The record gives the reactivity of an RNA of 177 nucleotides to 2A3 and DMS. It was measured as part of the RMDB library OK2TST. Conditions: 150 mM KOAc, 10 mM MgCl2 and 150 mM bicine (pH 8.5), 24 C.
[RMDB]
RNA sequence: GGGAACGACUCGAGUAGAGUCGAAAAAGCUGUUUGUGACACCCCGGAGUUCUCAAAUCCAAGAUGUAGGAGCCUGCCUUGGAGAGGCAGCCCUCAGACACUGCAGAGAAGGAAGGGGUCUCUGCAGGAGACUUGAAGAGUUCGCUCUUCAAGUCUCAAAAGAAACAACAACAACAAC
Reactivity to 2A3 in 0.01 (KOAc 150mM, MgCl2 10mM, bicine 150mM(pH8.5), 24C), signal-to-noise 1, nucleotides 027 to 126: a030g030c010u040g020u130u180u150g150u110g010a040c030a010c040c000c000c020g070g060a030g050u090u080c020u000c020a180a300a200u060c030c060a070a000g020a220u110g060u080a060g160g000a060g000c020c020u000g010c000c000u180u070g220g070a230g000a000g110g000c000a020g000c000c000c000u070c020a040g030a020c060a000c080u040g000c020a010g030a000g000a050a000g070g050a030a050g020g010g000g010u000c010u010c000u000g000c000a000g030
Reactivity to DMS in 0.01 (KOAc 150mM, MgCl2 10mM, bicine 150mM(pH8.5), 24C), signal-to-noise 2, nucleotides 027 to 126: a100g010c030u010g010u000u010u020g010u000g020a090c160a070c040c020c020c020g010g020a300g020u010u010c010u000c030a100a150a150u020c130c070a140a060g000a100u000g000u000a020g000g000a130g020c300c000u000g010c000c000u000u000g030g030a190g020a050g010g000c000a040g010c080c040c020u010c030a050g000a060c070a220c030u030g010c120a120g020a020g020a080a050g000g010a220a140g000g000g000g000u000c010u000c000u000g000c010a080g000

DMS adducts were read by reverse transcription with MarathonRT.